[RMDB]
RNA sequence: GGGAACGACUCGAGUAGAGUCGAAAAAUUCGCCGAGAAGCCUCUGUUCGAAAUCAUCGGGAGUGAUCCAGAUGACGGUCCUGCCAUGAGACCGCAACGAGAGGAUGUCGCAUCGAAUGGACUCGGGUAUACUAGGUGACGUUCGCGUCACCUAGAAAUCUAUCUCCUAAUUCGUUAGGAGAUAGAUAAAAGAAACAACAACAACAAC
Reactivity to DMS in 0.01 (KOAc 150mM, MgCl2 10mM, bicine 150mM(pH8.5), 24C), signal-to-noise 3, nucleotides 027 to 156: a120u000u000c020g000c070c000g020a100g030a130a150g010c020c020u000c010u000g010u000u010c020g000a080a120a110u000c010a000u000c040g000g040g020a050g020u000g010a220u000c000c010a090g010a040u020g010a060c030g020g020u000c020c020u000g000c080c260a130u000g010a030g020a040c030c020g040c060a050a070c000g010a070g010a060g000g010a090u000g010u000c020g000c030a160u000c030g010a050a300u000g000g000a100c020u000c000g010g000g010u000a090u000a140c000u000a010g010g020u000g030a020c000g020u000u010c270g040c050g020u010c000a000c000c000u000a000g000a030a060
Reactivity to 2A3 in 0.01 (KOAc 150mM, MgCl2 10mM, bicine 150mM(pH8.5), 24C), signal-to-noise 5, nucleotides 027 to 156: a000u060u030c030g030c020c000g020a020g030a100a050g060c010c010u000c010u030g050u070u070c060g030a120a070a100u040c010a000u020c070g010g030g010a030g040u170g030a070u010c020c010a040g040a150u100g040a070c040g000g000u010c010c020u060g190c040c020a090u080g010a020g010a120c020c010g030c070a020a010c050g140a020g000a010g050g030a030u080g090u060c060g000c090a070u030c050g070a030a030u060g030g010a020c000u000c020g010g000g060u100a100u030a150c000u000a000g000g000u000g000a000c000g010u060u010c230g030c000g100u000c000a000c000c000u000a000g000a000a000